[RMDB]
An RNA of 177 nucleotides, treated with DMS and 2A3 and read out base by base. The RNA was probed in 150 mM KOAc, 10 mM MgCl2 and 150 mM bicine (pH 8.5) at 24 C. It was measured as part of the RMDB library TTRDES.
RNA sequence: GGGAACGACUCGAGUAGAGUCGAAAAGAUAUGGACGUGUCCGAUCGAUAAGAAUAAUUCGGAAACGAAUUGAUUCUUUUGACGAUCUGACACGUCCUAAGUCAAAAGCUGGCCUUCGGGCCAGCAAGACUUAACUAGUCUUCGGACUAGUUAAGUCAAAAGAAACAACAACAACAAC
Reactivity to DMS in 0.01 (KOAc 150mM, MgCl2 10mM, bicine 150mM(pH8.5), 24C), signal-to-noise 3, nucleotides 027 to 126: g000a060u000a300u010g000g010a000c000g020u020g000u010c010c130g000a010u000c000g020a210u010a030a010g000a030a010u010a010a010u000u000c000g000g000a110a060a170c000g010a010a010u000u000g010a030u000u000c000u010u000u000u000g020a300c210g000a000u000c000u000g010a030c000a000c000g010u000c010c000u000a000a080g010u000c020a170a160a190a200g010c000u000g000g020c000c010u000u020c270g020g000g020c000c000a000g010c000a030a020
Reactivity to 2A3 in 0.01 (KOAc 150mM, MgCl2 10mM, bicine 150mM(pH8.5), 24C), signal-to-noise 2, nucleotides 027 to 126: g000a000u030a030u080g010g000a010c010g010u010g000u020c060c040g000a000u010c020g090a110u070a300a010g010a000a010u010a010a000u020u000c010g040g000a040a050a030c020g030a010a010u030u080g190a040u030u060c040u020u130u050u220g300a220c190g000a020u020c000u000g000a000c000a000c000g000u000c010c000u000a010a010g000u000c000a040a080a030a000g000c020u010g000g030c020c000u110u110c300g100g000g000c000c000a000g000c000a000a000